[RMDB]
RNA sequence: GGGAACGACUCGAGUAGAGUCGAAAACGCGCUUGCUGUCGGGCGCGAACGGAUAGUUGCCCUCGAUCGCGAGGCGGCAAACGUCGCUUACCGUCGCCUGCAACUGCCGCGACAGCAACUGGCCGAAUCAAAAUGCACCGUUCGCGGUGCAUUUUGAAAAAGAAACAACAACAACAAC
Reactivity to DMS in 0.01 (KOAc 150mM, MgCl2 10mM, bicine 150mM(pH8.5), 24C), signal-to-noise 1, nucleotides 027 to 126: c020g020c060g070c200u000u000g020c060u000g020u000c020g010g020g040c020g020c050g000a050a030c060g000g000a060u000a020g000u030u000g000c020c060c010u000c010g000a040u020c120g000c120g010a100g010g000c000g020g000c010a070a090a080c170g000u000c020g000c030u000u010a150c300c070g020u000c000g060c060c000u000g000c040a040a040c020u000g030c010c030g010c020g000a030c010a010g000c000a090a030c160u000g010g010c020c050g000a130a120
Reactivity to 2A3 in 0.01 (KOAc 150mM, MgCl2 10mM, bicine 150mM(pH8.5), 24C), signal-to-noise 1, nucleotides 027 to 126: c010g000c000g000c000u010u010g020c000u000g010u010c000g000g050g000c000g000c040g040a040a010c030g010g020a140u030a110g000u000u020g000c020c030c000u010c020g040a120u160c060g020c120g110a020g000g040c040g010g000c070a300a300a070c220g000u000c010g010c030u020u100a140c000c020g030u030c000g000c010c040u040g040c000a000a010c060u020g040c000c030g120c010g060a020c010a000g050c010a000a030c040u040g150g000c030c020g060a020a030